[RMDB]
An RNA of 177 nucleotides, treated with DMS and 2A3 and read out base by base. As a SHAPE reagent, 2A3 marks flexible, mostly unpaired nucleotides at the ribose 2'-OH.
RNA sequence: GGGAACGACUCGAGUAGAGUCGAAAAUAUUUUUAUCCAACUUGCGUAUCGCUACUCAAGACAACCUUCAUUAUGAAGUGCUUUUUCGCCAUUUGGACAAUCCUAAUGGUCGUGGUGAGUGCUGGGCCAUUAACUCCAGCUUCGGCUGGAGUUAAUGAAAAGAAACAACAACAACAAC
Reactivity to DMS in 0.01 (KOAc 150mM, MgCl2 10mM, bicine 150mM(pH8.5), 24C), signal-to-noise 3, nucleotides 027 to 126: u020a040u010u020u010u010u000a090u020c010c010a050a110c090u000u000g010c010g000u020a070u010c120g020c040u000a020c020u000c090a060a060g020a080c220a020a080c040c000u010u000c010a190u000u010a100u010g010a020a020g000u010g000c040u010u000u000u010u000c070g030c000c010a030u000u000u010g000g000a150c250a090a110u000c020c000u010a040a040u000g010g010u000c110g010u010g010g020u000g000a070g020u010g030c040u000g000g020g000c200
Reactivity to 2A3 in 0.01 (KOAc 150mM, MgCl2 10mM, bicine 150mM(pH8.5), 24C), signal-to-noise 3, nucleotides 027 to 126: u040a070u040u230u090u150u100a070u050c010c010a030a050c040u020u090g030c010g030u090a070u240c040g030c050u050a020c000u020c090a030a050g040a040c010a030a070c010c000u050u010c040a130u070u300a080u300g020a010a000g000u030g090c040u070u100u040u030u050c020g000c010c020a010u000u050u020g000g030a040c090a100a170u100c030c010u040a030a000u040g020g030u020c030g010u020g070g000u020g000a040g020u010g010c000u040g000g000g000c010